[RMDB]
RNA sequence: GGGAACGACUCGAGUAGAGUCGAAAAAGCAGGUUACGACCUGCAUUCGCCAAUUAGGACUUCACAACAUGCGAAUACCACCACUUCUAUGGAUAUUCGUUGUUGAUGAAGUCUUAAUGGACGUCAAAUGGAUGGAUUAUUUCGAUAAUCCAUCCAUAAAAGAAACAACAACAACAAC
Reactivity to DMS in 0.01 (KOAc 150mM, MgCl2 10mM, bicine 150mM(pH8.5), 24C), signal-to-noise 8, nucleotides 027 to 126: a060g020c010a010g010g010u000u020a110c190g030a060c000c000u000g010c010a060u010u020c010g020c010c010a070a030u000u000a000g000g000a020c000u000u010c000a010c010a010a010c000a000u040g020c000g000a020a010u000a010c040c070a080c170c110a100c250u020u020c210u030a160u000g010g010a180u000a000u000u000c000g010u000u000g010u000u010g000a090u010g010a000a010g000u000c000u000u000a000a000u000g000g010a050c040g010u010c170a070a110
Reactivity to 2A3 in 0.01 (KOAc 150mM, MgCl2 10mM, bicine 150mM(pH8.5), 24C), signal-to-noise 6, nucleotides 027 to 126: a000g010c000a010g010g030u050u090a090c180g050a020c040c000u000g000c000a000u040u050c000g010c010c000a030a090u000u000a000g010g010a000c000u010u000c010a000c010a020a010c010a020u170g030c000g010a000a000u010a020c040c070a060c020c030a120c080u260u090c070u250a140u090g040g020a130u000a000u050u000c000g000u000u010g000u000u000g010a020u000g000a000a000g000u000c000u000u000a000a000u000g010g000a020c050g060u070c090a120a190